[RMDB]
RNA sequence: GGGAACGACUCGAGUAGAGUCGAAAAUCCCGCCCGAGGCACGCGAUCACUCGGGCGGGUGAACAUCACCGGCUCAGCUGGAUUCUCGAACCCCCGACACCUCUACGCUCAGCGCACACAACCCCGAUGGUUUGCAUCAGUUCGCUGAUGCAAACCAAAAAGAAACAACAACAACAAC
Reactivity to 2A3 in 0.01 (KOAc 150mM, MgCl2 10mM, bicine 150mM(pH8.5), 24C), signal-to-noise 1, nucleotides 027 to 126: u080c030c000c000g020c000c000c000g070a040g000g050c050a030c150g120c070g010a110u020c000a010c020u000c010g050g000g020c010g020g000g000u000g000a000a050c090a110u110c030a030c050c010g020g000c030u000c020a020g000c000u000g060g000a100u200u000c010u050c000g060a100a110c010c000c010c000c000g000a010c000a010c030c000u000c040u060a040c020g020c030u010c100a020g060c020g000c010a000c000a000c000a010a070c000c010c010c010g010a010
An RNA of 177 nucleotides, treated with 2A3 and read out base by base. As a SHAPE reagent, 2A3 marks flexible, mostly unpaired nucleotides at the ribose 2'-OH. It was measured as part of the RMDB library RFM100. Reactivities are given for positions 27 through 126. The RNA was probed in 150 mM KOAc, 10 mM MgCl2 and 150 mM bicine (pH 8.5) at 24 C.